This 177-nucleotide RNA was probed chemically with 2A3 and DMS. The reactions ran in a buffer of 150 mM KOAc, 10 mM MgCl2 and 150 mM bicine (pH 8.5), at 24 C. 2A3 adducts were read by reverse transcription with SuperScript II with manganese. The data come from the RNA Mapping Database (RMDB), libraries RFM100 and RFMREP. Values are in units of 0.01, from 0 to 300, in steps of 10.

[RMDB]
RNA sequence: GGGAACGACUCGAGUAGAGUCGAAAAACGUGGCUGUACGCAGCCACGAACCAAUGUCAGACCACGCCAUGGCGUGCCACUCUGCGGACAGUGCAGUCUGCGACAGUGCCCCAGGAGGACUGGGUAACAUGGACAAUGACUUCGGUCAUUGUCCAUGAAAAGAAACAACAACAACAAC
Reactivity to 2A3 in 0.01 (KOAc 150mM, MgCl2 10mM, bicine 150mM(pH8.5), 24C), signal-to-noise 7, nucleotides 027 to 126: a000c000g010u000g000g000c000u010g030u060a040c290g030c120a010g000c000c000a000c010g000a000a000c000c000a020a030u010g000u020c010a000g010a010c000c000a000c010g010c010c030a240u300g150g000c000g000u000g010c000c000a010c000u020c020u050g020c000g000g010a010c010a000g000u000g000c000a000g000u000c010u010g000c000g020a060c020a030g190u240g200c000c000c000c000a010g010g050a070g050g120a090c000u010g000g000g000u010a030a010
Reactivity to DMS in 0.01 (KOAc 150mM, MgCl2 10mM, bicine 150mM(pH8.5), 24C), signal-to-noise 2, nucleotides 027 to 126: a110c020g040u000g000g000c020u020g000u030a150c160g060c020a010g030c000c000a010c010g000a060a110c000c000a100a020u000g010u000c010a020g000a030c000c000a010c000g030c000c060a090u030g030g000c020g050u000g020c020c000a000c000u000c020u000g010c060g000g010a230c280a030g000u010g020c010a020g000u000c000u000g000c010g010a140c060a000g010u010g000c000c000c010c000a010g000g000a190g000g000a240c010u000g000g000g020u000a020a100